[RMDB]
RNA sequence: GGGAACGACUCGAGUAGAGUCGAAAAGAGUACAUAUGCCCAGCCUUACUGUGUCGGCUGGAUGCUUCGUGCAAAUGCUAUGUACGCCUACGUAUAUGUGCGUAGAUGCCUAUAUUUUCUCUCCUGAGAAAAUAUAGAUGCAUACAAAGGCGAUGCAGAUAAAUGCUCAGUUCGCUGAGCAUUUAUCAAAAGAAACAACAACAACAAC
Reactivity to DMS in 0.01 (KOAc 150mM, MgCl2 10mM, bicine 150mM(pH8.5), 24C), signal-to-noise 3, nucleotides 027 to 156: g000a120g020u000a040c030a090u000a070u000g030c000c000c000a080g020c020c000u000u010a120c090u010g020u020g010u000c210g000g000c010u000g020g010a050u000g020c020u010u010c170g020u000g050c020a050a130a120u000g010c020u000a070u000g030u000a010c030g030c030c020u000a030c020g000u000a090u000a070u010g020u020g030c010g030u000a080g000a100u010g000c020c000u010a010u010a000u000u010u000u000c000u010c000u010c260c200u040g010a020g010a020a010a020a020u000a010u000a000g000a080u020g030c020a040u000a070c040a000a100a140g030g010c010g030a260u000g020c030a200
Reactivity to 2A3 in 0.01 (KOAc 150mM, MgCl2 10mM, bicine 150mM(pH8.5), 24C), signal-to-noise 6, nucleotides 027 to 156: g060a020g010u010a010c000a000u030a030u270g010c000c020c000a010g000c000c010u180u190a200c130u180g060u110g130u300c030g020g020c000u000g010g020a020u070g000c000u040u140c130g140u130g060c030a060a080a110u180g000c020u040a010u050g010u010a010c010g030c000c000u010a010c020g060u030a080u020a050u210g150u060g090c010g000u010a020g010a100u030g000c000c000u010a010u000a000u010u010u000u000c000u000c020u060c060c190u160g010a000g000a000a000a000a000u000a000u000a000g000a020u140g000c000a010u030a060c040a020a120a010g030g000c030g020a020u060g020c020a010